Source: RMDB library OK2TRN, as collected in RNAgym. The record gives the reactivity of an RNA of 177 nucleotides to DMS and 2A3. For DMS, 6,013 sequencing reads were counted. The reactions ran in a buffer of 150 mM KOAc, 10 mM MgCl2 and 150 mM bicine (pH 8.5), at 24 C. For 2A3 the reverse transcriptase was SuperScript II with manganese.
RNA sequence: GGGAACGACUCGAGUAGAGUCGAAAAGCUUGGGGCGAUACCCGUAUUCGGGGCGCUAUAUAAAACGGUUAUGCUUGCUGGUGCGUCAGCUGUCACUUCCGUGACUAGGUUUGUUGCCCCUGAACCACACUUAGCGUAGAUUCGUCUACGCUAAGUGAAAAGAAACAACAACAACAAC
Reactivity to DMS in 0.01 (KOAc 150mM, MgCl2 10mM, bicine 150mM(pH8.5), 24C), signal-to-noise 4, nucleotides 027 to 126: g020c160u000u000g010g020g000g010c010g020a050u010a080c070c000c020g020u010a140u000u010c050g020g010g000g000c130g000c030u000a040u000a110u000a060a120a100a040c040g000g000u000u000a050u010g010c040u000u010g010c010u000g000g010u010g020c180g010u010c020a030g000c020u000g000u000c010a030c050u010u000c080c060g010u000g000a100c120u000a080g000g010u000u000u010g010u000u000g000c000c010c010c030u010g010a060a130c050c060a270
Reactivity to 2A3 in 0.01 (KOAc 150mM, MgCl2 10mM, bicine 150mM(pH8.5), 24C), signal-to-noise 4, nucleotides 027 to 126: g070c110u100u130g010g020g030g000c020g010a030u100a130c020c010c010g030u110a240u110u300c040g030g020g020g000c050g020c020u030a040u020a000u030a300a090a010a020c040g030g020u110u070a090u230g060c060u070u070g000c000u060g020g120u120g070c050g070u060c020a010g030c010u040g030u080c000a020c070u190u120c060c080g010u010g000a010c060u080a040g110g000u050u080u120g040u020u070g020c000c000c000c010u020g030a050a020c000c000a000